Structure probing data (2A3 and DMS) for a 177-nucleotide construct. Source: RMDB libraries RFM100 and RFMREP, as collected in RNAgym. Conditions: 150 mM KOAc, 10 mM MgCl2 and 150 mM bicine (pH 8.5), 24 C.
RNA sequence: GGGAACGACUCGAGUAGAGUCGAAAACUCAACUUUUGUUGAGCCACAAUUUUAAUCCUAAUUGGAGAAGGCCAAAGGACUGUACUACUUUUGUAGGUGUAGCAGUCGCCCAGUGGGAAAGCGCCAAAAACAGUGUUAACUUCGGUUAACACUGUUUAAAAGAAACAACAACAACAAC
Reactivity to 2A3 in 0.01 (KOAc 150mM, MgCl2 10mM, bicine 150mM(pH8.5), 24C), signal-to-noise 9, nucleotides 027 to 126: c000u010c000a010a010c030u100u130u190u300g010u010u000g000a000g030c000c010a150c050a060a050u070u110u130u220a070a050u020c020c030u080a120a210u110u160g030g000a070g040a150a090g060g010c020c040a040a020a010g040g010a000c000u010g000u040a010c010u010a020c010u040u130u170u300g100u150a030g010g030u090g030u050a050g040c000a000g000u000c000g000c000c000c010a090g100u250g010g000g000a030a080a020g120c100g010c030c000a070a100
Reactivity to DMS in 0.01 (KOAc 150mM, MgCl2 10mM, bicine 150mM(pH8.5), 24C), signal-to-noise 7, nucleotides 027 to 126: c010u000c010a030a010c040u020u020u010u030g010u010u000g000a020g010c080c060a110c180a080a040u020u020u010u010a070a190u000c000c010u010a120a150u020u020g010g000a070g010a110a120g010g020c070c070a040a030a040g010g000a010c000u000g000u000a050c020u010a010c000u010u010u020u040g030u000a020g000g000u010g010u010a060g010c000a010g000u000c010g000c000c000c010a110g010u020g010g020g010a040a060a080g010c090g020c030c020a040a070